[RMDB]
RNA sequence: GGGAACGACUCGAGUAGAGUCGAAAACCACCCCAACUUGCAUUGUCUGUAGAAAUUGGGAAUCCAAUUUCUCUUUGUUGGGGCCCCGCCCCAACUCGCAUUGCCUGUAGAAUUUCUUUUCGAAAUUGUUGUAUGGCAUUUUCGAAUGCCAUACAACAAAAGAAACAACAACAACAAC
Reactivity to 2A3 in 0.01 (KOAc 150mM, MgCl2 10mM, bicine 150mM(pH8.5), 24C), signal-to-noise 3, nucleotides 027 to 126: c020c010a050c000c010c000c000a030a020c010u010u040g020c010a030u020u070g020u060c100u120g090u260a000g010a010a000a000u000u000g020g010g130a100a070u190c000c000a000a010u000u010u000c010u030c010u090u060u070g000u010u000g000g000g010g010c000c000c000c240g030c000c000c000c000a000a000c010u030c040g000c000a010u020u020g000c000c020u080g040u110a050g070a160a090u070u070u070c050u070u070u070u070c040g060a080a160a160u010u050